[RMDB]
RNA sequence: GGGAACGACUCGAGUAGAGUCGAAAAAGUGGGAGGCCGUACGCGGCCUGCCACAUGCAAGAGAAGAAGCGUUCAACCAAGCCGUGACAGGCAAGUCAGGGCUUCGGCGGGAAAUUGCUCUUACCAAAAAACCUCCUUUCCUUCGGGAAAGGAGGAACCACGGUUUUAAGUUCGCUUAAAACCGUGGAAAAGAAACAACAACAACAAC
Reactivity to 2A3 in 0.01 (KOAc 150mM, MgCl2 10mM, bicine 150mM(pH8.5), 24C), signal-to-noise 1, nucleotides 027 to 156: a010g010u000g000g000g010a000g050g040c020c010g030u030a040c230g020c000g120g000c000c000u010g040c000c000a020c000a000u040g070c020a060a100g060a070g030a060a000g010a070a000g020c030g040u030u030c010a020a020c020c010a000a010g000c010c010g160u000g000a000c010a070g040g200c030a060a030g000u000c010a040g010g020g100c000u000u060c130g040g000c050g080g070g000a010a010a000u090u110g010c000u000c000u000u120a080c040c060a050a020a000a020a080a090c000c000u010c010c000u000u000u010c020c000u030u080c200g070g000g000a020a000a000g030g000a000g010g000a000a000
Chemical mapping of a 207-nucleotide RNA with 2A3. Values cover nucleotides 27 to 156. Source: RMDB library M2RFPK, as collected in RNAgym. The 2A3 profile rests on 745 reads.